[RMDB]
RNA sequence: GGGAACGACUCGAGUAGAGUCGAAAAGAUAUGGAGCCUGAACUACGACCGCCCAGCAACAGCUCGGAAACGAGACAUGCUGUAACAAGUCGCAGGCUCCUAAGUCAAAGGGCGCUUCGGCGCCCAACUCCUGAACAUACUUCGGUAUGUUCAGGAGAAAAGAAACAACAACAACAAC
Reactivity to 2A3 in 0.01 (KOAc 150mM, MgCl2 10mM, bicine 150mM(pH8.5), 24C), signal-to-noise 1, nucleotides 027 to 126: g000a010u070a030u150g010g010a010g000c040c000u020g040a110a090c090u170a060c230g030a010c030c100g090c080c080c000a010g000c000a000a100c020a190g180c000u010c020g000g030a070a040a000c010g000a000g070a000c010a100u120g030c000u000g040u120a190a000c110a260a050g010u030c010g030c050a000g000g000c000u000c010c000u000a040a000g010u000c010a060a120a010g040g010g010c060g000c040u120u160c300g140g010c000g030c000c000c000a000a000
Reactivity to DMS in 0.01 (KOAc 150mM, MgCl2 10mM, bicine 150mM(pH8.5), 24C), signal-to-noise 1, nucleotides 027 to 126: g000a030u000a300u000g030g000a050g000c000c010u000g000a040a070c060u010a300c020g000a070c000c090g020c300c260c030a000g050c000a000a050c210a090g010c040u000c010g000g000a170a080a300c000g030a010g070a070c070a140u000g030c000u000g000u000a010a170c250a300a030g000u000c040g000c020a000g000g000c000u000c000c010u000a000a050g000u000c020a050a040a180g000g000g000c030g040c000u000u000c160g000g020c060g030c000c000c000a000a080